[RMDB]
RNA sequence: GGGAACGACUCGAGUAGAGUCGAAAAACGGAUAGAUUCGUCUAUCCGUGCAUCUCAUAACAGACAGAGAAUGUCUGCUAAGAUCUCACUUAGAUAAAGAGAAGAGAGUCGAGUUCGCUCGACUCAAGUUUACGAAAGAGUUCGCUCUUUCGUAAACAAAAGAAACAACAACAACAAC
Reactivity to DMS in 0.01 (KOAc 150mM, MgCl2 10mM, bicine 150mM(pH8.5), 24C), signal-to-noise 6, nucleotides 027 to 126: a020c000g010g000a010u000a000g000a030u000u020c190g010u000c000u000a000u000c000c000g010u000g000c150a120u010c010u000c010a100u010a070a120c010a000g000a000c000a030g000a170g000a140a120u000g000u000c000u000g010c100u000a010a020g000a040u000c010u000c050a130c040u000u000a040g000a160u020a030a060a080g000a040g010a070a130g000a170g000a010g010u000c000g000a020g010u000u010c200g010c010u000c000g010a010c000u000c000a020a040
Reactivity to 2A3 in 0.01 (KOAc 150mM, MgCl2 10mM, bicine 150mM(pH8.5), 24C), signal-to-noise 7, nucleotides 027 to 126: a000c000g000g000a000u010a000g010a010u040u050c180g040u000c100u000a000u000c000c000g000u000g000c020a100u010c000u000c010a050u140a130a050c000a000g010a010c000a000g080a010g140a300a160u030g000u000c010u000g010c000u010a020a020g010a080u030c040u020c050a060c030u030u050a030g050a140u160a240a140a010g070a020g020a100a030g100a010g000a000g030u000c010g000a000g000u030u080c170g030c070u000c000g010a000c000u000c000a000a000
Notes: Chemical mapping of a 177-nucleotide RNA with DMS and 2A3. The 2A3 profile rests on 11,720 reads. The data come from the RNA Mapping Database (RMDB), library M2PK50.